[RMDB]
This 207-nucleotide RNA was probed chemically with 2A3 and DMS. For DMS, 3,596 sequencing reads were counted. Conditions: 150 mM KOAc, 10 mM MgCl2 and 150 mM bicine (pH 8.5), 24 C.
RNA sequence: GGGAACGACUCGAGUAGAGUCGAAAAUGAUGAUGGUGAUGAUAAAACAGGAAAGUGGAAAUGGAAGAGUAAGGCUUGAUCUUCCCCUACAUGGGAAUCUUUGGUACGAGGUCCAGAGCGGCCAUCCCUUUCUUCUGGUGGGCCGGCAGCCUGUGAGACACUUAUCAUGGUUCGCCAUGAUAAGUGUAAAAGAAACAACAACAACAAC
Reactivity to 2A3 in 0.01 (KOAc 150mM, MgCl2 10mM, bicine 150mM(pH8.5), 24C), signal-to-noise 2, nucleotides 027 to 156: u160g060a020u010g000a000u030g050g000u050g010a030u010g040a030u050a110a050a040a010c050a010g020g000a000a010a000g010u020g010g080a010a010a130u140g010g030a040a030g010a030g050u080a100a030g040g010c060u020u080g060a060u000c070u030u020c000c000c000c000u080a150c030a160u090g000g000g080a030a050u090c000u000u040u000g000g020u000a000c000g020a010g010g000u000c000c000a000g020a000g060c000g010g000c010c020a030u120c010c010c010u080u220u110c000u170u040c050u050g040g030u030g010g060g000c090c000g000g000c000a000g050c020c050u040g010u040g100a000g000
Reactivity to DMS in 0.01 (KOAc 150mM, MgCl2 10mM, bicine 150mM(pH8.5), 24C), signal-to-noise 1, nucleotides 027 to 156: u030g020a100u000g000a060u010g030g030u000g010a110u000g040a170u000a020a040a040a130c030a100g010g000a030a080a050g020u010g010g000a030a040a040u010g040g010a040a120g000a150g010u000a040a060g000g030c040u000u000g010a080u000c050u010u000c000c010c030c080u000a060c160a070u000g000g010g010a060a050u000c030u000u010u000g020g010u000a020c040g020a010g030g000u000c010c010a110g000a120g000c000g020g010c010c010a110u010c010c020c010u000u010u000c080u000u000c080u030g010g050u010g010g030g020c010c010g000g020c050a100g010c000c000u000g000u030g010a200g000
Overview: DMS adducts were read by reverse transcription with MarathonRT. In probing experiments dimethyl sulfate is read out at A N1 and C N3, which are open when not base-paired.